The data come from the RNA Mapping Database (RMDB), library OK1LIB. This 177-nucleotide RNA was probed chemically with 2A3. The reactions ran in a buffer of 150 mM KOAc, 10 mM MgCl2 and 150 mM bicine (pH 8.5), at 24 C. For 2A3 the reverse transcriptase was SuperScript II with manganese.

RNA sequence: GGGAACGACUCGAGUAGAGUCGAAAAGCGAUCAAGAAAAAGUCGACGACUCUUCGGAGUCGCAUGUUCGCAUGCCUACGAAUGCGUCCAAAGUAGGUCGACGAAAAGGACGCAGAAGAUCGCGAAAGGGACUGUGUAUCUUCGGAUACACAGUCCCAAAAGAAACAACAACAACAAC
Reactivity to 2A3 in 0.01 (KOAc 150mM, MgCl2 10mM, bicine 150mM(pH8.5), 24C), signal-to-noise 1, nucleotides 027 to 126: g000c000g010a000u030c090a110a030g060a170a200a030a000a000g010u020c000g000a000c000g010a000c000u000c070u000u120c290g120g010a000g000u000c010g000c000a000u010g000u060u060c180g000c120a000u030g000c000c000u000a020c000g140a110a040u080g000c020g000u030c000c000a000a190a000g000u000a000g030g000u000c010g000a040c000g000a000a000a000a000g000g000a000c000g020c000a000g000a000a000g000a000u000c000g000c000g120a090a000a050